[RMDB]
RNA sequence: GGGAACGACUCGAGUAGAGUCGAAAAAGAGAGCGCGAAAAAGAUCGAUCGAUCGUUUGAACGCGCAAGUUUAAGUUUGAUACGGGCAUACUAGCUAGCUAGCUAGCAAAACUAACUUAAUAAAGAAACAAACAGUCAUAUUCGUAUGACUGUUUGUAAAAGAAACAACAACAACAAC
Reactivity to 2A3 in 0.01 (KOAc 150mM, MgCl2 10mM, bicine 150mM(pH8.5), 24C), signal-to-noise 4, nucleotides 027 to 126: a010g160a000g020a010g000c020g000c000g070a040a030a000a020a010g010a010u010c030g050a080u190c190g010a010u000c060g080u060u060u080g060a130a010c000g000c000g000c010a010a000g000u000u030u000a020a010g000u020u030u050g110a130u120a150c080g030g080g000c040a030u050a150c020u010a020g000c000u000a030g120c050u070a020g000c000u020a000g020c030a020a010a030a040c020u020a000a010c000u040u020a030a020u100a090a180a020g120a040a140
Reactivity to DMS in 0.01 (KOAc 150mM, MgCl2 10mM, bicine 150mM(pH8.5), 24C), signal-to-noise 6, nucleotides 027 to 126: a110g010a150g010a130g010c010g030c000g020a060a090a030a040a030g000a010u000c000g010a140u010c250g010a000u000c000g000u000u000u000g010a130a100c010g020c000g010c020a060a030g000u000u010u000a000a020g000u000u000u000g000a100u010a080c190g010g000g020c130a120u010a110c010u000a030g000c010u000a170g020c200u010a080g010c010u000a010g000c050a040a040a070a060c020u000a030a020c000u000u010a030a030u010a050a070a090g000a080a090

Chemical mapping of a 177-nucleotide RNA with 2A3 and DMS. The RNA was probed in 150 mM KOAc, 10 mM MgCl2 and 150 mM bicine (pH 8.5) at 24 C. It was measured as part of the RMDB library M2PK90. The 2A3 profile rests on 5,175 reads. Reactivities are rounded to 0.1 and cut off at 0 and 3. DMS adducts were read by reverse transcription with MarathonRT.